[RMDB]
RNA sequence: GGGAACGACUCGAGUAGAGUCGAAAACUCAUUGGGUCCUUCGUCCAUCUCCUUUUCUUACCUUUGGCCGGCAUGGUCCCAGCCUCCUCGUCGGCGCCGGCCGGGCAACAUUCCGAGGGGACCGUCCGAAGAGAUACAGGUUCGCCUGUAUCUCUUCAAAAGAAACAACAACAACAAC
Reactivity to DMS in 0.01 (KOAc 150mM, MgCl2 10mM, bicine 150mM(pH8.5), 24C), signal-to-noise 1, nucleotides 027 to 126: c010u000c060a150u000u030g000g000g000u000c020c030u010u010c070g020u000c040c040a070u010c030u020c030c000u000u000u000u030c070u010u000a190c080c020u010u010u000g040g020c010c010g030g040c040a160u010g030g010u000c030c000c010a220g000c060c020u000c060c080u000c080g010u000c100g000g000c110g000c000c010g010g000c040c000g000g000g000c090a030a060c110a120u000u000c030c030g010a130g010g010g020g020a030c010c040g000u010c130c090
Reactivity to 2A3 in 0.01 (KOAc 150mM, MgCl2 10mM, bicine 150mM(pH8.5), 24C), signal-to-noise 1, nucleotides 027 to 126: c000u000c000a060u030u110g050g020g000u000c020c010u020u020c040g050u000c010c000a030u010c020u020c030c000u100u050u080u050c030u030u120a100c010c000u100u070u110g020g000c010c000g020g000c010a030u100g040g000u000c030c000c000a000g010c000c010u090c030c000u060c030g200u030c030g060g000c030g000c010c020g000g060c000c020g000g000g010c020a050a030c000a110u150u100c010c020g050a030g020g010g020g000a020c000c010g040u010c030c060